This 177-nucleotide RNA was probed chemically with 2A3 and DMS.
The data come from the RNA Mapping Database (RMDB), library RFM100.
For 2A3 the reverse transcriptase was SuperScript II with manganese.
[RMDB]
RNA sequence: GGGAACGACUCGAGUAGAGUCGAAAAUGUGUGCCGAAAAGCACACACAUAUAAUAAUGCGAUGUUUUGUGCAAAGCACAAAACUCGUCAGAUAAACAGUGGGGCUGAAUUUCUGCCGAACUGUUUAAUAAAUUUUUGUGUUCGCACAAAAAUUUAUAAAAGAAACAACAACAACAAC
Reactivity to 2A3 in 0.01 (KOAc 150mM, MgCl2 10mM, bicine 150mM(pH8.5), 24C), signal-to-noise 5, nucleotides 027 to 126: u050g010u000g000u010g010c040c030g200a070a050a010a000g020c000a010c000a000c000a000c010a010u100a010u090a260a160u150a110a050u180g000c000g000a030u120g010u000u000u000u000g020u000g020c160a300a180a140g000c000a010c000a000a000a000a000c000u000c000g030u030c010a010g040a150u090a030a000a000c000a000g000u020g020g210g010g000c050u050g020a160a200u210u300u090c040u100g010c000c010g010a020a010c000u000g000u000u000u000a000
Reactivity to DMS in 0.01 (KOAc 150mM, MgCl2 10mM, bicine 150mM(pH8.5), 24C), signal-to-noise 3, nucleotides 027 to 126: u020g030u010g010u000g000c030c000g010a090a120a210a230g010c000a000c000a010c010a030c160a070u040a070u010a120a130u040a060a110u030g020c010g000a010u040g010u000u000u000u000g020u010g000c020a210a120a230g000c000a010c000a010a000a010a000c000u000c010g000u030c120a060g000a170u000a010a000a010c010a000g010u010g000g010g010g020c000u000g020a110a160u030u020u020c040u000g010c000c000g010a220a020c010u000g010u000u010u010a020

Values are in units of 0.01, from 0 to 300, in steps of 10. Conditions: 150 mM KOAc, 10 mM MgCl2 and 150 mM bicine (pH 8.5), 24 C.